[RMDB]
RNA sequence: GGGAACGACUCGAGUAGAGUCGAAAAGAUAUGGACGCAUGAGCUCUUUUGACGGCUCCGGUCGGAAACGACCGAAGAGCCGAUAAGAGCCAUGCGUCCUAAGUCAAAAGUCGGCUUCGGCCGACAACAUAUGACGACUGUUCGCAGUCGUCAUAUGAAAAGAAACAACAACAACAAC
Reactivity to 2A3 in 0.01 (KOAc 150mM, MgCl2 10mM, bicine 150mM(pH8.5), 24C), signal-to-noise 2, nucleotides 027 to 126: g000a020u080a040u160g000g000a000c010g000c020a000u000g040a110g160c030u010c060u070u270u190u240g290a150c010g010g020c000u000c010c000g000g000u000c010g030g000a140a060a020c030g000a020c020c020g040a020a020g000a000g030c030c000g000a000u070a050a000g000a010g000c000c000a000u000g010c000g000u000c000c000u000a000a000g010u000c000a020a030a000a050g000u020c000g010g000c030u060u120c270g150g000c010c000g000a000c000a010a010
Reactivity to DMS in 0.01 (KOAc 150mM, MgCl2 10mM, bicine 150mM(pH8.5), 24C), signal-to-noise 3, nucleotides 027 to 126: g020a050u010a300u010g000g000a030c010g020c000a010u000g010a200g010c010u000c000u000u000u000u010g020a220c060g010g030c000u000c000c000g020g000u000c010g020g020a090a090a170c010g020a010c000c020g000a120a130g010a030g010c000c000g020a040u000a020a010g000a030g010c000c000a000u000g000c000g010u000c000c000u000a000a070g010u010c040a100a140a140a100g000u000c010g030g010c010u000u000c270g040g030c000c000g000a000c010a040a100